[RMDB]
RNA sequence: GGGAACGACUCGAGUAGAGUCGAAAAGAUAUGCUAAACACUGCCGCUUGAAGUCUGUUUAGAUGAAAUAUAAUCAAGCUAGUAUCAUGUUGGUUGUUUAUUGCUUAGCAUGAUGCGAAAAUUAUCAAUAAACUACACACGUAGAAAGAUUUGUAUCCUACUAGUCCUAGUUCGCUAGGACUAGUAGAAAAGAAACAACAACAACAAC
Reactivity to 2A3 in 0.01 (KOAc 150mM, MgCl2 10mM, bicine 150mM(pH8.5), 24C), signal-to-noise 5, nucleotides 027 to 156: g080a060u140a020u180g000c000u010a000a000a000c000a000c030u000g000c000c020g000c030u000u000g010a000a010g010u020c010u020g020u010u000u000a020g000a060u090g060a040a190a040u290a030u060a050a030u050c000a000a000g000c000u010a010g000u000a000u010c010a000u000g020u030u030g060g000u010u020g020u030u040u010a030u040u060g000c010u030u060a010g000c000a000u000g010a010u000g000c010g010a040a010a010a020u200u140a080u110c020a000a000u020a040a020a010c000u150a020c090a020c030a000c060g040u090a030g150a170a170a040g080a090u080u080u130g040u080a080u060c000
Reactivity to DMS in 0.01 (KOAc 150mM, MgCl2 10mM, bicine 150mM(pH8.5), 24C), signal-to-noise 2, nucleotides 027 to 156: g000a150u010a120u000g000c000u000a020a010a030c020a040c070u000g010c040c040g010c000u020u020g010a160a120g020u000c110u000g010u000u000u000a050g020a090u000g010a080a080a110u000a090u010a050a160u000c020a030a050g050c010u000a130g000u000a060u000c000a050u000g000u010u010g010g000u000u000g010u000u000u010a020u000u000g000c010u020u000a100g010c000a020u000g030a050u000g000c020g000a020a030a030a070u000u000a190u010c050a040a070u000a020a050a050c000u000a070c100a150c110a060c130g020u020a110g010a130a080a160g010a150u000u000u000g020u000a140u000c060